[RMDB]
RNA sequence: GGGAACGACUCGAGUAGAGUCGAAAAGCAUGCAUCUUGAGCGGCUCGUCGGCCCAGCGCGGAAUCACGUGGAAGUGCACGUGCGGCACCGUCUGGCCCGCCGCCGCGCCGUUGAACUGGCCGAUGACCUACCAGGUGGGUUCGCCCACCUGGUAGGAAAAGAAACAACAACAACAAC
Reactivity to 2A3 in 0.01 (KOAc 150mM, MgCl2 10mM, bicine 150mM(pH8.5), 24C), signal-to-noise 1, nucleotides 027 to 126: g030c030a050u120g000c010a050u020c050u110u070g080a000g040c000g020g000c020u000c060g010u000c020g000g010c000c010c000a020g000c080g000c020g000g010a160a120u090c010a010c010g010u020g000g190a300a160g150u180g210c000a000c000g000u030g000c030g020g020c030a030c040c000g140u110c090u120g010g000c070c120c040g020c000c020g000c000c000g010c000g040c020c000g110u090u080g010a050a040c050u060g040g000c010c000g010a020u070g020a040
Reactivity to DMS in 0.01 (KOAc 150mM, MgCl2 10mM, bicine 150mM(pH8.5), 24C), signal-to-noise 1, nucleotides 027 to 126: g050c060a060u010g000c020a000u000c070u010u030g000a120g010c020g020g000c130u000c050g010u000c020g010g010c000c010c020a010g030c110g000c020g010g000a170a170u000c000a010c000g020u010g000g020a150a190g020u030g020c060a000c030g020u000g000c100g000g020c130a150c030c030g000u000c090u000g060g000c300c030c170g010c010c050g010c000c020g030c070g020c010c060g000u000u000g010a050a140c080u030g020g030c030c030g000a070u010g000a170